[RMDB]
RNA sequence: GGGAACGACUCGAGUAGAGUCGAAAAGGAGUGCUACCGAAAGGUAGCACUCCAACAAAUCGGUGUAAGUAUAGCCAGUCUUACACCGUGCGGCACAGCGGAAACGCUGAUGUCGUAUACAAGGCUAUACUACUACUCGGUUCGCCGAGUAGUAGUAAAAAGAAACAACAACAACAAC
Reactivity to DMS in 0.01 (KOAc 150mM, MgCl2 10mM, bicine 150mM(pH8.5), 24C), signal-to-noise 2, nucleotides 027 to 126: g000g020a020g020u010g010c000u000a010c000c010g020a130a090a220g010g010u000a000g010c000a010c000u000c010c020a030a040c100a030a040a050u000c010g010g020u000g000u000a000a020g010u010a080u000a000g010c000c010a290g030u000c000u000u000a010c000a010c000c010g010u000g010c000g010g000c000a020c000a010g020c000g000g000a150a070a220c010g040c000u000g000a050u010g010u000c000g000u000a060u010a120c130a080a110g000g000c000u000a030